[RMDB]
RNA sequence: GGGAACGACUCGAGUAGAGUCGAAAAGAUAUGGAUAUGUGUAGUCGAUAAGCUGCUGUCGGAAACGACAGUCAGCUUUUGACGACUGACACAUAUCCUAAGUCAAACAGCGUGUUCGCACGCUGAACAAGACUCUACUGUUCGCAGUAGAGUCUUGAAAAGAAACAACAACAACAAC
Reactivity to DMS in 0.01 (KOAc 150mM, MgCl2 10mM, bicine 150mM(pH8.5), 24C), signal-to-noise 5, nucleotides 027 to 126: g020a040u000a300u010g000g000a010u010a010u000g010u000g020u000a020g000u000c000g020a210u010a010a010g020c000u000g010c000u010g010u000c000g020g000a140a100a230c010g010a010c010a010g000u010c010a000g020c000u000u000u000u000g010a230c130g010a020c010u000g010a020c000a010c000a010u010a000u000c000c000u010a010a060g010u000c040a140a160a270c010a010g000c010g060u000g010u000u020c240g030c000a020c010g010c000u000g000a070a230
Reactivity to 2A3 in 0.01 (KOAc 150mM, MgCl2 10mM, bicine 150mM(pH8.5), 24C), signal-to-noise 2, nucleotides 027 to 126: g030a020u050a020u190g000g010a000u000a010u010g010u020g030u020a020g000u000c020g040a100u020a200a000g010c000u000g000c000u010g000u000c010g010g060a130a040a070c010g010a000c020a010g010u090c020a010g010c030u010u020u000u020g020a000c010g000a000c000u100g040a000c010a000c000a020u010a000u010c000c000u000a030a010g030u010c070a130a070a110c010a000g010c000g000u010g050u080u220c240g020c100a000c010g000c000u000g000a000a000
This 177-nucleotide RNA was probed chemically with DMS and 2A3. For 2A3, 6,811 sequencing reads were counted. The DMS profile rests on 7,507 reads. High 2A3 reactivity points to a flexible backbone, as in loops and unpaired stretches. Conditions: 150 mM KOAc, 10 mM MgCl2 and 150 mM bicine (pH 8.5), 24 C. Values are in units of 0.01, from 0 to 300, in steps of 10.